RNA sequence: GGGAACGACUCGAGUAGAGUCGAAAACCGCAUCCCGCACGGGAGGCGCAGCUGCUGCAUGACGCUUUAACGUCGCAGCUCACCACCGCCUGACCAUUCUGCCAGGAGAUAACGGUUGCCCACUCUUUGUUCCACAGAGAUUCGUCUCUGUGGAACAAAAAGAAACAACAACAACAAC
Reactivity to DMS in 0.01 (KOAc 150mM, MgCl2 10mM, bicine 150mM(pH8.5), 24C), signal-to-noise 1, nucleotides 027 to 126: c020c130g000c140a060u000c000c040c080g000c060a030c190g050g000g000a110g000g000c000g040c140a000g050c190u050g000c000u000g020c010a220u040g050a000c010g000c080u000u000u030a000a300c010g000u000c000g000c030a010g010c030u000c110a140c150c030a090c280c000g000c000c020u000g000a200c000c040a080u020u000c280u000g000c000c140a120g020g060a050g000a160u010a130a250c030g030g000u000u000g000c040c000c000a300c040u100c080u000u000
Reactivity to 2A3 in 0.01 (KOAc 150mM, MgCl2 10mM, bicine 150mM(pH8.5), 24C), signal-to-noise 5, nucleotides 027 to 126: c010c000g010c010a020u020c000c000c010g050c010a030c080g010g010g010a020g010g000c020g000c000a060g010c030u070g010c000u020g000c010a110u280g000a000c000g050c060u200u100u260a160a040c000g000u000c010g000c010a010g000c000u020c040a080c010c010a020c030c000g010c000c000u080g060a150c020c000a050u130u050c030u050g000c020c040a090g020g050a170g020a070u050a090a040c010g010g000u020u040g040c000c000c000a030c000u060c020u010u010
Chemical mapping of a 177-nucleotide RNA with DMS and 2A3. Conditions: 150 mM KOAc, 10 mM MgCl2 and 150 mM bicine (pH 8.5), 24 C. Reactivities are given for positions 27 through 126. It was measured as part of the RMDB libraries RFM100 and RFMREP.